This 207-nucleotide RNA was probed chemically with 2A3 and DMS. The reactions ran in a buffer of 150 mM KOAc, 10 mM MgCl2 and 150 mM bicine (pH 8.5), at 24 C. For 2A3, 1,996 sequencing reads were counted. The data come from the RNA Mapping Database (RMDB), library OK3TST. The DMS profile rests on 2,862 reads.
RNA sequence: GGGAACGACUCGAGUAGAGUCGAAAAAGACGAACUUGCUUCGAGGAGGCUGCGGAAUGGUGUAUCCCAACUACAAGUCGGUGAGACAUUUGAACACGGCGAUGUCAAGUUCACUCGGAAUCCGGAUACCAUUAAGGAAGAAUCCAACCUUGCCAAAAUUCGUGAUCUUUUUCGAAAGAUCACGAAUAAAAGAAACAACAACAACAAC
Reactivity to 2A3 in 0.01 (KOAc 150mM, MgCl2 10mM, bicine 150mM(pH8.5), 24C), signal-to-noise 3, nucleotides 027 to 156: a010g090a020c080g000a050a030c030u040u080g010c000u030u040c030g030a060g050g030a030g040g000c040u030g010c040g060g010a040a060u110g040g000u020g010u020a030u040c040c000c000a010a020c020u170a050c010a060a090g030u040c040g010g020u120g040a040g010a010c020a050u050u090u130g040a080a000c030a010c080g100g000c040g040a020u020g070u120c010a000a030g010u000u030c020a020c030u050c050g020g050a070a030u060c060c010g000g030a040u040a090c020c020a060u110u140a080a030g010g010a020a040g030a050a050u000c010c000a010a040c020c000u010u090g030c020c000a060a150a030
Reactivity to DMS in 0.01 (KOAc 150mM, MgCl2 10mM, bicine 150mM(pH8.5), 24C), signal-to-noise 2, nucleotides 027 to 156: a100g010a100c030g040a020a090c020u000u000g000c030u000u000c000g010a140g010g010a120g000g040c000u000g000c050g050g040a050a030u010g010g000u000g000u000a080u010c030c020c000a060a040c050u010a070c150a040a100g020u000c030g030g000u010g010a300g010a060c040a050u000u020u000g010a200a150c050a050c060g000g060c080g030a040u000g010u020c030a040a100g000u000u000c000a100c070u000c050g010g020a080a120u000c020c010g020g010a120u000a150c020c040a130u000u000a110a100g000g000a090a110g000a080a110u000c010c010a070a060c060c010u000u000g000c010c030a040a050a080